[RMDB]
RNA sequence: GGGAACGACUCGAGUAGAGUCGAAAAGCGAACGAGAAGCCAACCUGAUUCCUGGCGGCAAGUCUCUGUCCGGCGGCUCUGCGCACUCGCCGGCUGUGCAGGUGGUCGUUUCGAAGGCUACCCACGCCGUCACAGGACGGUUCGCCGUCCUGUGACGAAAAGAAACAACAACAACAAC
Reactivity to DMS in 0.01 (KOAc 150mM, MgCl2 10mM, bicine 150mM(pH8.5), 24C), signal-to-noise 1, nucleotides 027 to 126: g020c020g000a060a100c040g000a070g020a100a300g030c040c000a040a100c050c010u000g000a170u000u020c110c030u000g020g000c050g010g000c090a050a070g000u020c020u010c020u010g010u050c020c050g000g020c090g040g000c100u000c020u000g030c110g070c070a100c140u000c010g000c020c020g010g000c040u000g050u000g010c000a060g000g000u000g000g000u000c020g000u000u020u000c060g020a100a160g100g010c000u010a080c020c000c060a110c180g000c120
Annotation:
This 177-nucleotide RNA was probed chemically with DMS.